An RNA of 177 nucleotides, treated with DMS and 2A3 and read out base by base.
Reactivities are given for positions 27 through 126.
For 2A3, 17,402 sequencing reads were counted.
The DMS profile rests on 7,099 reads.

[RMDB]
RNA sequence: GGGAACGACUCGAGUAGAGUCGAAAAAAGAUAUGGACUAGAGACAUGCUCCGAAAGACCGAAGAACAGCUUCGGAAACGAAGCUGGGAGGUCUAGUAGCUGAGCAACAGCUCUAGUCCUAAGUCAAGUUACAAUACAUCUUCGGAUGUAUUGUAACAAAAGAAACAACAACAACAAC
Reactivity to DMS in 0.01 (KOAc 150mM, MgCl2 10mM, bicine 150mM(pH8.5), 24C), signal-to-noise 6, nucleotides 027 to 126: a100a080g010a040u010a300u010g010g010a010c010u000a010g000a030g000a040c110a240u000g000c000u000c000c020g020a200a240a140g010a010c000c000g000a140a140g020a190a220c030a010g020c000u000u000c010g000g000a060a060a140c000g000a030a000g000c000u000g000g000g010a080g020g010u000c000u000a050g000u000a110g020c300u010g010a010g010c030a040a070c300a150g010c010u000c000u000a010g000u000c000c000u000a000a050g010u000c050a090a130
Reactivity to 2A3 in 0.01 (KOAc 150mM, MgCl2 10mM, bicine 150mM(pH8.5), 24C), signal-to-noise 4, nucleotides 027 to 126: a000a000g070a040u110a080u140g000g000a010c000u010a000g000a000g030a040c040a170u080g000c010u010c010c010g040a050a020a000g010a000c010c010g180a280a030g010a090a020c000a000g000c000u000u000c000g020g000a010a030a020c010g000a000a000g000c010u010g020g000g010a010g010g010u010c000u000a010g030u010a000g000c230u110g000a000g000c000a020a010c030a030g010c000u000c000u000a000g000u020c000c000u000a030a000g030u010c040a060a050